An RNA of 177 nucleotides, treated with 2A3 and DMS and read out base by base. 2A3 adducts were read by reverse transcription with SuperScript II with manganese. For DMS, 4,754 sequencing reads were counted. The 2A3 profile rests on 1,308 reads. DMS adducts were read by reverse transcription with MarathonRT. Conditions: 150 mM KOAc, 10 mM MgCl2 and 150 mM bicine (pH 8.5), 24 C.
RNA sequence: GGGAACGACUCGAGUAGAGUCGAAAAAGCACCAGCCGCUAGCGUAGUUUGUGCGAAACCAAAACUUGAUGACUCAACAUCGCUCUCUACUGAGAAACAACCAUUGAGUUAUGUUAUUGCCAAUGGAGAUUCGUAAAACGUUCGCGUUUUACGAAUCAAAAGAAACAACAACAACAAC
Reactivity to 2A3 in 0.01 (KOAc 150mM, MgCl2 10mM, bicine 150mM(pH8.5), 24C), signal-to-noise 3, nucleotides 027 to 126: a000g040c000a020c020c030a010g010c000c000g020c000u120a050g050c000g110u010a020g010u070u020u100g080u000g000c040g050a100a040a060c010c010a000a040a000a070c070u120u200g060a060u050g030a030c040u000c110a020a060c010a150u040c030g000c000u020c000u000c010u070a190c110u110g050a010g020a100a070a000c020a000a070c010c000a040u030u110g100a150g080u000u040a030u160g090u060u110a120u100u150g020c010c010a010a020u030g000g020a040
Reactivity to DMS in 0.01 (KOAc 150mM, MgCl2 10mM, bicine 150mM(pH8.5), 24C), signal-to-noise 3, nucleotides 027 to 126: a170g010c060a020c020c040a160g040c000c020g000c020u030a080g010c160g020u000a040g020u000u000u030g010u040g000c040g010a050a100a150c100c030a090a070a050a170c150u020u010g010a120u040g000a060c050u030c070a030a070c060a040u020c040g010c100u030c000u000c020u000a070c130u010g000a080g020a070a040a120c110a090a110c030c040a060u010u010g000a120g010u000u020a050u030g000u000u030a110u000u000g020c000c000a060a130u000g000g000a300